Source: RMDB library OK1LIB, as collected in RNAgym. Structure probing data (2A3) for a 177-nucleotide construct.

RNA sequence: GGGAACGACUCGAGUAGAGUCGAAAAGCUCACAAGCCUGCUAAUCAACAACGCCGGAGCCCUGGCUCGUCGAUGGCCAGGCCGGCACCUUCACCAACAUCAACCCGGCCACCGAGGAGCCGCUAGGGGAUCCCGUCCACUUCGGUGGACGGGAUCCAAAAGAAACAACAACAACAAC
Reactivity to 2A3 in 0.01 (KOAc 150mM, MgCl2 10mM, bicine 150mM(pH8.5), 24C), signal-to-noise 1, nucleotides 027 to 126: g000c010u000c000a070c020a050a010g030c010c000u020g050c000u110a120a090u180c090a090a130c010a020a000c070g020c000c000g050g020a080g000c000c010c050u030g010g010c030u010c090g300u100c100g040a080u050g020g000c000c010a020g050g000c030c000g020g000c020a020c000c000u100u140c020a050c080c020a090a080c010a190u150c030a030a010c010c010c000g060g000c040c000a010c000c000g180a070g080g000a000g010c040c020g010c010u030a040g000g110
Source information:
2A3 adducts were read by reverse transcription with SuperScript II with manganese.